[RMDB]
RNA sequence: GGGAACGACUCGAGUAGAGUCGAAAAGGGACGUUUACGUGACUGGGCUUGUCUGCACCAUGUCGGUGUGAGUGCAGGAGCCGAGCAAUAACGACAGCAUCGACUGCGCCCGGAGAAUGUCUGGACGGUCUUUCAAGGACGCGGGUUCAAUUCCCGCCUUUUGACUAAGGUUCGCCUUAGUCAAAAGAAAAGAAACAACAACAACAAC
Reactivity to 2A3 in 0.01 (KOAc 150mM, MgCl2 10mM, bicine 150mM(pH8.5), 24C), signal-to-noise 3, nucleotides 027 to 156: g060g010g030a060c070g000u080u070u100a120c130g040u120g140a070c020u080g010g000g060c010u010u050g050u120c000u010g010c000a010c010c010a020u030g080u070c090g010g050u140g000u010g040a110g010u010g000c010a010g000g010a000g010c000c010g000a000g010c070a060a080u090a140a010c020g050a040c040a040g020c020a080u030c030g050a060c010u040g050c020g010c010c010c000g030g000a050g040a090a130u140g020u120c020u060g020g030a020c030g040g000u020c000u040u190u100c090a080a060g070g000a030c030g000c010g020g000g000u040u050c020a010a030u070u010c000c000c000g000c000
Reactivity to DMS in 0.01 (KOAc 150mM, MgCl2 10mM, bicine 150mM(pH8.5), 24C), signal-to-noise 1, nucleotides 027 to 156: g000g030g010a130c050g170u000u000u000a030c080g010u000g020a130c000u000g000g010g030c020u010u010g060u010c000u000g000c010a040c000c000a040u000g020u000c140g020g030u010g030u000g000a210g040u000g000c020a070g000g000a050g030c000c020g000a050g020c030a080a090u000a060a090c030g010a120c040a080g020c020a240u000c060g000a110c020u000g000c010g020c000c030c020g040g000a060g010a070a070u000g000u000c010u000g000g000a060c080g000g020u000c010u000u030u010c080a100a200g020g000a060c080g000c000g000g020g000u000u000c040a090a300u010u000c000c000c010g050c100
Structure probing data (2A3 and DMS) for a 207-nucleotide construct.
As a SHAPE reagent, 2A3 marks flexible, mostly unpaired nucleotides at the ribose 2'-OH.
For DMS, 3,275 sequencing reads were counted.
For 2A3, 2,054 sequencing reads were counted.
For 2A3 the reverse transcriptase was SuperScript II with manganese.
Conditions: 150 mM KOAc, 10 mM MgCl2 and 150 mM bicine (pH 8.5), 24 C.